[RMDB]
RNA sequence: GGGAACGACUCGAGUAGAGUCGAAAACAGCUUGUGGCUUUCUCAUACGAUUUCUGGCAUGCGAAGGAGCACACAGAGUCCCAGUCUGUCAGGGCUCCCCAGCCCGGCUGGCUGCUCCGCUCACUGGCAGAAAUAGCAACUUCGGUUGCUAUUUCUGAAAAGAAACAACAACAACAAC
Reactivity to DMS in 0.01 (KOAc 150mM, MgCl2 10mM, bicine 150mM(pH8.5), 24C), signal-to-noise 2, nucleotides 027 to 126: c140a060g020c060u000u000g040u020g010g010c040u000u000u020c020u010c030a160u010a080c100g010a150u010u000u000c060u000g010g030c010a040u000g010c040g000a100a120g000g030a030g000c020a050c110a070c110a050g010a080g000u000c080c040c020a100g000u000c010u000g030u000c050a120g030g010g010c000u000c080c040c040c020a300g020c020c020c030g000g000c040u000g030g000c060u000g010c010u000c030c060g010c090u010c050a110c010u000g000g010
Reactivity to 2A3 in 0.01 (KOAc 150mM, MgCl2 10mM, bicine 150mM(pH8.5), 24C), signal-to-noise 1, nucleotides 027 to 126: c030a020g040c030u080u070g030u070g080g040c010u000u050u070c000u010c010a060u150a140c050g150a220u000u220u060c080u150g030g100c010a030u050g000c030g000a040a000g020g050a020g020c030a010c010a010c040a110g020a010g090u090c020c000c030a000g040u000c010u050g080u060c120a140g040g000g020c020u070c020c050c000c000a020g000c030c030c040g000g030c010u010g000g000c000u000g010c030u000c010c030g000c010u040c020a070c050u020g080g000